This 177-nucleotide RNA was probed chemically with DMS and 2A3.
RNA sequence: GGGAACGACUCGAGUAGAGUCGAAAAGAUAUGGACCUCUACCCACCUCCAUCCAGACGUUGAAAUCGGAAACGAUGGAGUCUGAGGAGAGGAGGUCCUAAGUCAAAGUCUUGCUUCGGCAAGACAAGAUAGUAGAAUACUUCGGUAUUCUACUAUCAAAAGAAACAACAACAACAAC
Reactivity to DMS in 0.01 (KOAc 150mM, MgCl2 10mM, bicine 150mM(pH8.5), 24C), signal-to-noise 8, nucleotides 027 to 126: g010a120u010a160u010g010g010a010c010c000u000c010u000a150c010c010c020a300c120c000u000c000c000a100u010c200c010a010g010a060c000g000u000u010g000a070a110a030u000c000g010g000a120a080a180c030g000a010u000g000g000a050g010u000c010u000g010a060g000g000a030g000a090g010g000a010g000g010u000c000c000u000a030a080g010u020c130a090a120a110g000u000c000u000u000g000c000u000u010c170g010g010c000a000a010g000a000c010a030a060
Reactivity to 2A3 in 0.01 (KOAc 150mM, MgCl2 10mM, bicine 150mM(pH8.5), 24C), signal-to-noise 8, nucleotides 027 to 126: g070a060u210a200u230g000g000a000c000c000u010c010u110a300c030c000c010a020c000c010u000c000c010a100u100c120c020a020g020a070c010g200u300u100g040a050a040a030u050c010g020g000a080a050a050c020g000a010u010g010g010a010g000u000c020u010g020a050g020g010a020g020a020g000g010a000g020g000u000c000c000u010a050a010g070u040c110a210a050a030g000u000c000u000u000g010c010u040u100c210g130g000c010a000a000g000a010c000a000a020
Description: For 2A3, 29,959 sequencing reads were counted. The RNA was probed in 150 mM KOAc, 10 mM MgCl2 and 150 mM bicine (pH 8.5) at 24 C. For DMS the reverse transcriptase was MarathonRT. It was measured as part of the RMDB library TTRDEL. For 2A3 the reverse transcriptase was SuperScript II with manganese.